[RMDB]
RNA sequence: GGGAACGACUCGAGUAGAGUCGAAAAGAUAUGGAGUGGUACGGGAGAAUCUAGGUUCGGAAACGAACCUGAUUCAUCGAUCGUACGUAACAUCUCCUAAGUCAAAACUGGAAGUUCGCUUCCAGAAGUUACAAAGCUGGUUCGCCAGCUUUGUAACAAAAGAAACAACAACAACAAC
Reactivity to 2A3 in 0.01 (KOAc 150mM, MgCl2 10mM, bicine 150mM(pH8.5), 24C), signal-to-noise 1, nucleotides 027 to 126: g010a000u030a020u060g010g000a000g000u120g000g020u030a010c020g010g130g000a050g000a020a010u010c060u150a170g040g000u010u000c000g000g000a020a010a010c000g000a000a010c000c000u000g000a000u040u010c000a020u230c010g010a000u030c000g000u050a000c000g000u040a090a030c050a190u070c020u030c000c000u000a040a000g020u000c010a030a000a140a170c010u010g000g010a030a000g010u060u090c210g130c150u000u000c040c010a000g000a020a020
Reactivity to DMS in 0.01 (KOAc 150mM, MgCl2 10mM, bicine 150mM(pH8.5), 24C), signal-to-noise 2, nucleotides 027 to 126: g000a020u000a100u000g020g000a020g010u000g020g010u000a000c000g010g000g010a010g000a030a000u000c000u010a000g030g010u010u000c010g000g000a030a040a050c000g000a000a000c000c000u010g000a010u000u000c020a270u000c150g010a060u010c020g000u010a010c000g040u000a100a190c200a100u020c010u000c010c010u000a000a100g000u020c000a100a090a070a170c000u000g010g010a010a010g020u000u020c260g000c000u000u000c000c000a000g010a060a050
Source information
Structure probing data (2A3 and DMS) for a 177-nucleotide construct. The data come from the RNA Mapping Database (RMDB), library TTRDEL. For 2A3 the reverse transcriptase was SuperScript II with manganese. The RNA was probed in 150 mM KOAc, 10 mM MgCl2 and 150 mM bicine (pH 8.5) at 24 C.